RNA sequence: GGGAACGACUCGAGUAGAGUCGAAAAGAUAGUAGCAGACAUGGUAAGCGUAGUUCAGUCGGUAGAGCCCCAGAUUGUGAUUCUGGUUGUCGCGGGUUCAAGUCCCGUCGCUUACCCUCCUAUGCACGAUGAAUGUGUGAUUCGUCACACAUUCAUCAAAAGAAACAACAACAACAAC
Reactivity to DMS in 0.01 (KOAc 150mM, MgCl2 10mM, bicine 150mM(pH8.5), 24C), signal-to-noise 8, nucleotides 027 to 126: g010a120u000a100g030u000a110g010c040a040g010a130c190a090u000g000g010u000a020a010g010c020g030u000a060g010u000u000c040a050g000u020c180g020g020u010a030g010a030g020c020c280c000c010a020g010a020u010u020g020u010g010a140u010u000c010u000g000g010u010u000g010u010c030g000c020g000g000g000u010u000c050a030a300g000u000c000c000c010g020u000c020g000c010u000u020a010c000c000c110u000c050c030u000a120u010g000c070a060c190